[RMDB]
An RNA of 207 nucleotides, treated with 2A3 and read out base by base. Reactivities are given for positions 27 through 156. The reactions ran in a buffer of 150 mM KOAc, 10 mM MgCl2 and 150 mM bicine (pH 8.5), at 24 C. Source: RMDB library OK3TST, as collected in RNAgym.
RNA sequence: GGGAACGACUCGAGUAGAGUCGAAAAGGUCGGUGAUGUAAAUGGUCCGAUCGAUGAGUUCGCAUUGGAACGCGACGACGUUAUUCAACUCGAAUAAUUCCUUCGCGUCGACGUUGCCCGAAAACAUUUGCAUGUCGUCCAUAAACACGAUCAUAAAGCUGGCUGUUAGCUUCGGCUAACAGCCAGCAAAAGAAACAACAACAACAAC
Reactivity to 2A3 in 0.01 (KOAc 150mM, MgCl2 10mM, bicine 150mM(pH8.5), 24C), signal-to-noise 2, nucleotides 027 to 156: g010g010u030c040g000g080u080g140a120u050g030u070a010a040a010u030g080g010u020c030c020g020a020u010c020g010a050u100g050a040g110u070u140c080g000c180a110u070u110g050g040a050a000c000g010c000g010a000c000g020a030c060g030u020u000a000u010u010c090a140a100c190u050c200g010a000a000u040a040a020u100u080c010c000u050u040c030g000c000g000u020c000g010a070c030g000u010u110g100c000c030c040g000a000a120a000a000c030a030u070u040u060g040c050a040u040g000u000c010g040u000c060c000a040u100a040a090a020c090a010c090g100a120u180c030a060u210a060a050a030